The data come from the RNA Mapping Database (RMDB), library OK2TRN. An RNA of 177 nucleotides, treated with DMS and 2A3 and read out base by base. For 2A3 the reverse transcriptase was SuperScript II with manganese. For DMS the reverse transcriptase was MarathonRT. Values cover nucleotides 27 to 126. For 2A3, 11,108 sequencing reads were counted.
[RMDB]
RNA sequence: GGGAACGACUCGAGUAGAGUCGAAAAGAAAGGGACCCAGUGCUCCCCACGCAGCCAGUCGUCCCCAGGCAUGCUUUUGCAUGCCCGACUGAGGGGAGCUGCGGCACUGAGGGGAGGUCCCGAAAGAAAAUUACCAUUAGUUCGCUAAUGGUAAUUUAAAAGAAACAACAACAACAAC
Reactivity to DMS in 0.01 (KOAc 150mM, MgCl2 10mM, bicine 150mM(pH8.5), 24C), signal-to-noise 9, nucleotides 027 to 126: g000a100a130a190g000g010g010a020c010c020c050a050g010u000g010c050u000c050c020c010c050a300c110g000c020a030g000c030c040a050g010u000c020g000u010c020c020c020c300a160g000g000c000a000u000g000c000u010u000u010u010g010c000a010u000g000c000c000c030g000a040c070u000g000a150g010g000g010g010a210g010c010u000g010c020g000g010c040a050c050u000g000a110g020g010g010g020a180g000g000u000c000c010c000g010a040a080a120g000a080
Reactivity to 2A3 in 0.01 (KOAc 150mM, MgCl2 10mM, bicine 150mM(pH8.5), 24C), signal-to-noise 5, nucleotides 027 to 126: g070a050a100a050g000g000g000a010c030c050c020a020g040u040g060c020u130c030c010c010c000a000c020g050c000a000g060c080c010a020g050u060c010g050u060c040c000c000c000a000g000g000c010a010u010g000c010u170u270u250u300g000c000a000u000g000c010c000c010g010a000c040u070g030a080g030g030g000g010a020g000c000u010g000c000g050g010c060a020c070u050g030a100g030g020g010g020a020g000g000u010c030c020c020g040a030a060a010g070a020